Source information: The data come from the RNA Mapping Database (RMDB), library OK3TST. Chemical mapping of a 207-nucleotide RNA with DMS and 2A3.

[RMDB]
RNA sequence: GGGAACGACUCGAGUAGAGUCGAAAAGCCAAUCGCUCAAAAAGAACGCUGCCCGCAAUUUUCCGCUCAAGUCUUCAAUUUCUCGGCCAGCGCGUUCGCCUUCACUCGCGAAUUGCCUGCUUCCUUGAUGAUCUUGCGGGCCUGGUCCUCAGUGAGGGUAACGGUAUAGAUUCGUCUAUACCGUUACAAAAGAAACAACAACAACAAC
Reactivity to DMS in 0.01 (KOAc 150mM, MgCl2 10mM, bicine 150mM(pH8.5), 24C), signal-to-noise 3, nucleotides 027 to 156: g020c030c020a110a120u020c090g000c000u010c000a060a100a130a150a100g000a050a050c030g010c080u000g020c010c010c030g030c040a020a050u000u020u000u000c050c060g040c120u010c040a070a060g000u030c030u000u010c070a060a110u000u000u010c050u010c080g000g010c070c020a050g020c060g050c020g010u000u000c010g070c000c060u000u000c190a120c130u010c070g000c020g000a030a050u000u010g060c000c010u000g010c040u000u000c050c010u010u000g000a100u000g010a040u000c030u000u000g010c010g020g010g000c000c010u000g020g010u000c010c000u000c020a150g010u010g000a100g020g030
Reactivity to 2A3 in 0.01 (KOAc 150mM, MgCl2 10mM, bicine 150mM(pH8.5), 24C), signal-to-noise 8, nucleotides 027 to 156: g050c000c000a030a090u120c070g020c030u050c040a080a090a030a030a020g010a040a020c020g010c050u020g000c010c010c000g000c000a020a010u050u030u060u050c020c010g030c020u010c000a030a060g060u040c090u230u080c170a140a240u100u300u120c190u090c050g110g000c120c050a030g000c030g000c000g140u010u010c000g000c010c000u260u270c110a160c140u110c070g010c000g020a010a010u060u300g000c000c000u010g010c010u110u080c000c010u020u010g010a030u050g000a010u020c010u000u010g000c010g000g000g000c000c000u000g000g000u010c000c000u030c030a130g060u040g070a030g010g070
For DMS, 8,723 sequencing reads were counted. Values cover nucleotides 27 to 156. The reactions ran in a buffer of 150 mM KOAc, 10 mM MgCl2 and 150 mM bicine (pH 8.5), at 24 C. The 2A3 profile rests on 9,466 reads.